[RMDB]
RNA sequence: GGGAACGACUCGAGUAGAGUCGAAAAGGAGGGGGCUGAAGCCAUCCCUGGGCACGGUGACAAAGUGCUUCCCAUAGGGCCCCUCAUGGGCUCAUCUGUCGCCCUGGGGUGGGGCUGCCCAUUUACACUCUUGUAAUUCGUUCGCGAAUUACAAGAGAAAAGAAACAACAACAACAAC
Reactivity to DMS in 0.01 (KOAc 150mM, MgCl2 10mM, bicine 150mM(pH8.5), 24C), signal-to-noise 3, nucleotides 027 to 126: g010g000a110g020g000g000g000g030c020u000g000a120a180g000c000c010a040u000c000c000c000u000g000g000g000c000a060c060g000g010u010g020a080c090a090a090a110g000u010g020c190u000u000c020c010c020a120u000a060g010g000g010c020c030c000c190u010c150a050u010g000g010g010c110u000c010a030u010c070u010g000u000c120g000c010c000c010u010g010g020g020g050u000g010g000g000g020c100u000g000c010c000c010a100u000u000u000a110c200a130
Reactivity to 2A3 in 0.01 (KOAc 150mM, MgCl2 10mM, bicine 150mM(pH8.5), 24C), signal-to-noise 1, nucleotides 027 to 126: g090g050a140g040g120g000g010g000c020u080g040a100a000g050c020c000a000u000c000c000c000u000g000g000g010c030a000c020g050g040u070g020a020c030a050a300a000g060u060g090c040u060u020c000c000c000a010u050a060g040g030g070c000c000c010c000u000c080a090u160g000g000g000c000u000c030a030u010c010u130g040u030c080g000c000c020c040u010g000g020g000g010u030g000g030g060g050c040u060g040c010c000c000a020u060u080u030a070c070a020
This 177-nucleotide RNA was probed chemically with DMS and 2A3. Source: RMDB library OK2TRN, as collected in RNAgym. The DMS profile rests on 2,794 reads. Conditions: 150 mM KOAc, 10 mM MgCl2 and 150 mM bicine (pH 8.5), 24 C. DMS (dimethyl sulfate) methylates the pairing face of unpaired adenines and cytosines. For DMS the reverse transcriptase was MarathonRT.